[RMDB]
RNA sequence: GGGAACGACUCGAGUAGAGUCGAAAAUAAAAUUCCUGCACCACUCUAAAGGAUAUUAGGGCAACCGAUCGUAAUCCGGGACAUCAAUUGGUGGUCGAGGAAGAGUUAUCUUUUCUUAUUAACACUGCCUCAUAGGAUCGUUCGCGAUCCUAUGAGGAAAAGAAACAACAACAACAAC
Reactivity to DMS in 0.01 (KOAc 150mM, MgCl2 10mM, bicine 150mM(pH8.5), 24C), signal-to-noise 3, nucleotides 027 to 126: u010a010a070a080a160u020u020c000c000u020g010c090a040c000c010a050c010u010c100u020a090a030a050g000g000a020u010a060u010u060a160g000g040g030c170a110a140c020c030g000a070u020c180g020u030a130a070u000c050c000g000g000g010a080c250a060u020c090a080a110u060u010g000g000u000g010g030u000c070g000a020g000g000a020a010g000a080g000u000u010a010u000c030u000u000u000u000c010u000u020a080u040u010a070a060c100a110c130u000g020
Reactivity to 2A3 in 0.01 (KOAc 150mM, MgCl2 10mM, bicine 150mM(pH8.5), 24C), signal-to-noise 4, nucleotides 027 to 126: u100a000a040a010a020u040u010c000c000u020g030c030a000c000c000a010c000u110c050u130a080a050a030g110g010a030u030a120u090u190a060g040g000g000c040a070a090c020c030g070a100u130c100g120u120a070a050u010c020c000g030g000g030a050c040a090u100c040a090a180u060u020g000g020u020g010g050u010c090g010a080g000g030a010a000g010a010g120u050u040a070u070c040u020u080u050u030c040u060u160a280u090u060a080a010c060a040c030u080g050

This 177-nucleotide RNA was probed chemically with DMS and 2A3.
Conditions: 150 mM KOAc, 10 mM MgCl2 and 150 mM bicine (pH 8.5), 24 C.
2A3 adducts were read by reverse transcription with SuperScript II with manganese.